[RMDB]
Description:
This 177-nucleotide RNA was probed chemically with 2A3 and DMS. The RNA was probed in 150 mM KOAc, 10 mM MgCl2 and 150 mM bicine (pH 8.5) at 24 C. The data come from the RNA Mapping Database (RMDB), library OK2TRN.

RNA sequence: GGGAACGACUCGAGUAGAGUCGAAAACGGCGGUUCAUGGGGGUCCACACUGGGUCUUGCCUAUGCCGAAACCCAUCCCGAGCGCGUAUCGGAACUGGUGCUGCGCGGCAUUUUCAUGGUGCGCCGAGUUUUAAUUUAUAUUCGUAUAAAUUAAAACAAAAGAAACAACAACAACAAC
Reactivity to 2A3 in 0.01 (KOAc 150mM, MgCl2 10mM, bicine 150mM(pH8.5), 24C), signal-to-noise 2, nucleotides 027 to 126: c020g040g000c040g010g090u160u160c080a020u070g000g000g020g000g000u000c020c030a060c020a020c190u090g050g000g000u000c000u040u110g080c000c000u030a070u100g020c010c010g000a050a030a040c010c000c000a030u040c020c020c000g040a060g010c120g000c020g000u070a020u040c020g020g040a050a050c100u130g050g020u020g010c010u070g020c080g060c050g030g000c020a010u080u060u060u120c040a030u120g020g020u020g010c000g000c000c010g010a030
Reactivity to DMS in 0.01 (KOAc 150mM, MgCl2 10mM, bicine 150mM(pH8.5), 24C), signal-to-noise 5, nucleotides 027 to 126: c090g010g030c020g020g010u010u010c070a050u000g010g020g000g010g010u000c010c000a120c200a090c220u000g020g000g000u010c040u010u000g000c040c070u000a060u000g020c070c020g000a040a080a090c040c010c020a100u000c040c020c010g000a120g010c070g010c090g010u010a030u000c020g010g010a070a070c300u000g010g010u000g010c030u010g030c080g030c050g000g000c040a030u010u010u000u010c040a050u000g010g020u000g000c020g000c020c030g000a110